[RMDB]
Chemical mapping of a 207-nucleotide RNA with 2A3 and DMS. The 2A3 profile rests on 782 reads. The reactions ran in a buffer of 150 mM KOAc, 10 mM MgCl2 and 150 mM bicine (pH 8.5), at 24 C. For DMS, 2,349 sequencing reads were counted. In probing experiments dimethyl sulfate is read out at A N1 and C N3, which are open when not base-paired.

RNA sequence: GGGAACGACUCGAGUAGAGUCGAAAAGCUUUGGAACUAUUACUGGUACCGCCACUCUUAUGCGCAAUUUCACCUCCUCUGUCGUUGAUGCGUUACAAUUUCUUAAUAAGACGCUAGCUGUGCCGACAUCCGCACAUUUCUUUACUGAAAAUGUCGACUUUGUGCGAUUAUUCGUAAUCGCACAAAGAAAAGAAACAACAACAACAAC
Reactivity to 2A3 in 0.01 (KOAc 150mM, MgCl2 10mM, bicine 150mM(pH8.5), 24C), signal-to-noise 2, nucleotides 027 to 156: g050c030u040u080u060g010g010a050a060c060u040a080u210u140a120c090u110g030g040u040a050c040c000g000c010c000a040c020u000c020u040u110a060u110g010c030g000c010a060a130u050u070u140c020a030c010c080u080c000c070u050c090u040g070u030c020g030u020u060g070a050u050g030c000g000u040u030a030c030a060a080u060u150u220c110u100u200a110a070u050a100a060g030a020c070g020c030u010a020g020c010u020g040u060g080c020c000g000a020c030a040u060c120c020g040c050a000c000a010u000u080u000c010u110u230u090a180c180u050g000a020a060a040a080u070g050u090c010g060a030
Reactivity to DMS in 0.01 (KOAc 150mM, MgCl2 10mM, bicine 150mM(pH8.5), 24C), signal-to-noise 1, nucleotides 027 to 156: g010c030u000u000u000g010g010a050a080c040u000a090u000u000a110c100u000g000g030u000a030c010c050g010c030c030a050c020u000c060u010u010a020u000g020c000g030c050a060a090u000u010u000c010a130c070c000u000c010c070u000c100u000g020u000c020g000u000u010g000a160u000g010c030g010u000u010a060c100a080a120u000u020u010c080u020u000a130a140u000a090a100g000a040c040g020c050u000a110g000c050u010g020u000g050c050c040g010a080c040a060u000c020c030g060c010a060c030a070u000u000u000c000u010u000u020a250c130u010g010a040a020a040a100u000g010u000c030g010a230